[RMDB]
RNA sequence: GGGAACGACUCGAGUAGAGUCGAAAAUAGCUCAAGGGCGUACACAUCUUGCCUAUGGCAUUUCCCUGGACGUAAGCGGUGACCGCAAGGUAGCAACCUGGAGUUAGCUCGGCUGUGAGUACGUGCAGUGGUGAUAGAGGUUCGCCUCUAUCACCACAAAAGAAACAACAACAACAAC
Reactivity to DMS in 0.01 (KOAc 150mM, MgCl2 10mM, bicine 150mM(pH8.5), 24C), signal-to-noise 1, nucleotides 027 to 126: u020a070g020c010u000c100a060a300g070g000g000c080g000u000a080c100a060c120a120u000c120u000u000g000c070c010u010a180u010g020g020c030a050u000u000u020c000c000c000u000g010g020a030c050g030u000a060a050g020c050g000g030u020g020a070c060c030g040c120a060a090g000g020u030a100g000c040a090a090c020c010u010g000g000a010g030u000u000a120g040c020u000c040g010g000c030u000g010u000g000a050g000u010a040c090g010u010g000c140a070
Chemical mapping of a 177-nucleotide RNA with DMS. It was measured as part of the RMDB library RFMREP. For DMS the reverse transcriptase was MarathonRT. The reactions ran in a buffer of 150 mM KOAc, 10 mM MgCl2 and 150 mM bicine (pH 8.5), at 24 C.